[RMDB]
RNA sequence: GGGAACGACUCGAGUAGAGUCGAAAAUGCAGCUGAAAAGAUCGAUGAAGCCUUGUCGAUUUGUUAUAAAAAGGCUAGGCCUGUUUACAUUGGUAUUCCUUCUGAUGCUGGCUACUUCAAAGCAUCACAUCACCUACGAGUUCGCUCGUAGGUGAUGAAAAGAAACAACAACAACAAC
Reactivity to 2A3 in 0.01 (KOAc 150mM, MgCl2 10mM, bicine 150mM(pH8.5), 24C), signal-to-noise 2, nucleotides 027 to 126: u070g030c000a010g010c020u090g040a050a050a100a000g040a050u050c010g000a000u030g050a060a010g040c000c020u000u000g030u010c000g010a000u060u070u090g150u140u130a200u140a160a020a000a000a010g040g000c020u010a010g000g030c040c030u110g030u050u100u060a020c000a010u050u080g000g000u050a050u050u010c010c000u050u070c060u020g030a030u010g000c010u030g000g100c030u080a100c060u090u120c070a060a120a000g000c000a000u030c020a000
Reactivity to DMS in 0.01 (KOAc 150mM, MgCl2 10mM, bicine 150mM(pH8.5), 24C), signal-to-noise 3, nucleotides 027 to 126: u010g020c040a030g000c030u010g010a100a110a120a150g010a030u000c020g020a020u000g010a160a220g000c030c030u000u010g000u000c000g000a300u010u000u020g000u000u010a050u010a030a040a040a050a180g010g010c000u000a040g010g000c010c060u000g000u010u000u000a130c060a030u000u010g030g010u000a070u000u000c030c000u000u000c180u000g010a010u000g030c010u000g010g000c050u000a080c070u000u000c090a090a080a050g020c000a000u000c010a120